[RMDB]
RNA sequence: GGGAACGACUCGAGUAGAGUCGAAAAAAAAGGGGUCACUAGAGGAUGUGGGAACUCGGCAAACACAUGGAGCGAUGAAAUAUGCUGAAGCCUCCACGGCAUAUGGAGCUCCAUUACUGUCCACAUCUACCCACCUAGUGACGGAGGCACCCAAAAAGUCAUCAAAAGAGUUCGCUCUUUUGAUGACAAAAGAAACAACAACAACAAC
Reactivity to 2A3 in 0.01 (KOAc 150mM, MgCl2 10mM, bicine 150mM(pH8.5), 24C), signal-to-noise 1, nucleotides 027 to 156: a000a000a000a020g130g010g030g000u010c010a000c000u000a000g000a030g050g000a000u030g030u040g010g060g000a080a070c130u080c130g100g010c110a100a260a120c050a000c030a120u000g000g000a000g000c010g100a120u020g010a020a000a000u010a000u000g000c010u020g040a040a020g000c000c000u000c000c000a010c010g010g020c000a000u000a000u010g000g010a000g020c000u020c010c000a010u000u000a000c000u010g070u010c000c010a020c000a010u000c020u040a080c040c040c040a000c000c000u000a000g000u000g010a000c000g000g000a000g000g010c000a010c000c000c000a040a130a000a040a100
Chemical mapping of a 207-nucleotide RNA with 2A3. The data come from the RNA Mapping Database (RMDB), library RNAMAK. The reactions ran in a buffer of 150 mM KOAc, 10 mM MgCl2 and 150 mM bicine (pH 8.5), at 24 C.